[RMDB]
RNA sequence: GGGAACGACUCGAGUAGAGUCGAAAAUCGGAUCGGUAUCAUCUGAUGCCCAUUAUUACGCCCGCAUACCCACAACAGAAUUCCACAUUUAAUGUGUCCGAAUCCACCAAGAAGGUCAUAUUGACCGCUCUACUAUGAUUUUCGAAUCAUAGUAGAGAAAAGAAACAACAACAACAAC
Reactivity to 2A3 in 0.01 (KOAc 150mM, MgCl2 10mM, bicine 150mM(pH8.5), 24C), signal-to-noise 9, nucleotides 027 to 126: u050c000g010g010a010u030c060g010g060u130a060u160c030a010u020c070u090g010a020u060g030c000c010c010a020u090u120a080u080u080a050c060g030c020c020c000g000c010a010u050a060c000c020c020a020c020a090a050c020a050g100a090a050u100u010c040c010a030c020a050u060u140u160a200a120u120g020u010g030u030c010c010g020a020a050u020c020c010a040c040c010a070a040g090a060a030g070g000u030c010a030u170a130u300u230g000a010c000c010g000
Reactivity to DMS in 0.01 (KOAc 150mM, MgCl2 10mM, bicine 150mM(pH8.5), 24C), signal-to-noise 8, nucleotides 027 to 126: u000c040g010g000a020u000c120g010g020u000a070u000c090a090u000c040u000g000a040u000g010c020c000c030a090u000u010a090u000u010a090c120g000c030c030c060g020c090a050u000a080c030c010c030a050c090a050a060c080a080g000a070a090u000u010c030c010a040c050a040u010u000u010a080a060u010g010u000g010u000c060c040g010a080a080u010c030c030a100c110c110a090a090g010a070a090g020g010u000c000a090u010a140u010u010g010a020c020c010g010